[RMDB]
RNA sequence: GGGAACGACUCGAGUAGAGUCGAAAAUCAGCAUGUCCUGUAAGCGAAUCUCUUGCUGUUUGCGAACUUCAGGAUUCUAGUUUCACGCAGGUUAUGCACGCUAGGGAUGAUCAGGAAAUCAUAGUUAACGUAUCAGGACGUUCGCGUCCUGAUACGUAAAAGAAACAACAACAACAAC
Reactivity to DMS in 0.01 (KOAc 150mM, MgCl2 10mM, bicine 150mM(pH8.5), 24C), signal-to-noise 1, nucleotides 027 to 126: u000c050a100g010c160a070u000g000u000c000c000u000g020u000a080a070g020c150g050a100a070u000c070u000c030u020u000g000c110u060g030u100u000u040g000c090g010a000a060c010u000u000c000a060g000g040a100u000u000c070u000a060g000u020u000u000c080a080c140g040c130a000g000g000u000u010a000u080g100c030a070c130g050c030u000a000g000g000g000a050u000g000a150u000c130a060g100g000a000a120a040u000c020a140u040a020g000u000u040a180
Reactivity to 2A3 in 0.01 (KOAc 150mM, MgCl2 10mM, bicine 150mM(pH8.5), 24C), signal-to-noise 3, nucleotides 027 to 126: u100c040a010g010c050a010u090g000u000c000c000u040g050u060a140a000g060c030g090a030a010u010c010u000c030u050u130g020c010u040g040u150u170u100g030c100g050a030a020c000u110u050c070a040g020g040a060u090u080c040u100a140g080u000u090u100c070a080c120g040c010a000g030g000u110u060a090u160g010c070a010c110g040c020u120a100g110g020g020a010u030g010a040u110c060a060g000g100a030a040a070u100c090a090u050a050g060u010u130a160

The data come from the RNA Mapping Database (RMDB), library OK1LIB.
This 177-nucleotide RNA was probed chemically with DMS and 2A3.
The reactions ran in a buffer of 150 mM KOAc, 10 mM MgCl2 and 150 mM bicine (pH 8.5), at 24 C.
The DMS profile rests on 1,135 reads.
For 2A3, 1,473 sequencing reads were counted.